[RMDB]
RNA sequence: GGGAACGACUCGAGUAGAGUCGAAAAAGUUGAUGACAAGUCGAUAUCUUUCGAGCGUGAUGUGAUGGACGCUUACUGGAACAAAGAUAUUCAGGCCUCAACAAAUCGACGCUUGUUAUUAGAAGUCUGACUAAUAUCGAUUCGUCGAUAUUAGUCAAAAAGAAACAACAACAACAAC
Reactivity to DMS in 0.01 (KOAc 150mM, MgCl2 10mM, bicine 150mM(pH8.5), 24C), signal-to-noise 2, nucleotides 027 to 126: a130g010u010u000g000a040u000g010a070c060a070a090g020u030c300g010a110u000a030u000c000u000u000u000c100g010a010g010c010g010u000g000a090u000g000u010g010a080u010g010g010a010c020g020c010u000u000a100c180u010g000g010a080a120c170a020a040a030g000a020u000a030u000u000c060a110g020g000c010c010u000c040a060a010c070a020a120a160u010c040g010a010c020g010c100u000u000g000u000u000a100u000u000a120g000a070a100g010u000c070
Reactivity to 2A3 in 0.01 (KOAc 150mM, MgCl2 10mM, bicine 150mM(pH8.5), 24C), signal-to-noise 4, nucleotides 027 to 126: a000g050u030u020g000a070u090g020a020c040a150a040g020u010c000g000a000u000a030u000c000u000u070u070c090g030a030g020c010g020u040g040a260u120g160u120g130a150u300g100g040a010c020g010c000u010u050a090c110u200g060g010a100a020c060a100a100a020g020a030u010a050u070u080c010a030g050g030c020c010u030c010a010a040c000a020a080a020u040c010g020a010c020g020c090u100u060g070u220u080a180u080u070a100g000a170a010g050u010c050
Source information
Structure probing data (DMS and 2A3) for a 177-nucleotide construct. The RNA was probed in 150 mM KOAc, 10 mM MgCl2 and 150 mM bicine (pH 8.5) at 24 C. The DMS profile rests on 2,881 reads.